RNA sequence: GGGAACGACUCGAGUAGAGUCGAAAACCCUGGAACUUCGGUUCCAGGGCAUGGUGCAAAUCCCCCGCUGAAACGGAGCGAUAUCCGUCCCAAAAAUAUAAAAAGCUGAUGAUUUCGAUCAUCAGAACACAGCAUAGCUUUUCGAAGCUAUGCUGUGAAAAGAAACAACAACAACAAC
Reactivity to 2A3 in 0.01 (KOAc 150mM, MgCl2 10mM, bicine 150mM(pH8.5), 24C), signal-to-noise 1, nucleotides 027 to 126: c020c000c000u000g020g010a010a000c000u050u080c190g070g010u000u000c000c010a000g000g010g010c000a070u110g060g000u140g040c020a090a050a190u110c020c010c000c000c010g030c010u050g060a040a040a040c010g000g000a010g010c000g020a010u000a000u000c000c000g010u020c000c000c000a100a030a010a040a010u260a030u140a060a250a030a020a030g090c010u000g010a010u010g000a000u000u060u050c190g040a000u000c000a020u000c000a000g000a050a000
Reactivity to DMS in 0.01 (KOAc 150mM, MgCl2 10mM, bicine 150mM(pH8.5), 24C), signal-to-noise 1, nucleotides 027 to 126: c000c000c000u010g000g000a030a010c000u000u000c150g050g030u000u000c000c000a000g010g000g020c120a010u000g000g010u030g000c300a120a170a060u030c020c000c000c030c020g030c020u000g010a070a140a030c000g000g010a000g020c040g040a000u000a010u000c030c020g000u010c080c160c060a030a020a110a070a090u000a030u050a060a050a080a110a210g000c000u000g000a000u000g000a040u000u000u020c130g030a020u000c010a000u000c000a000g020a100a160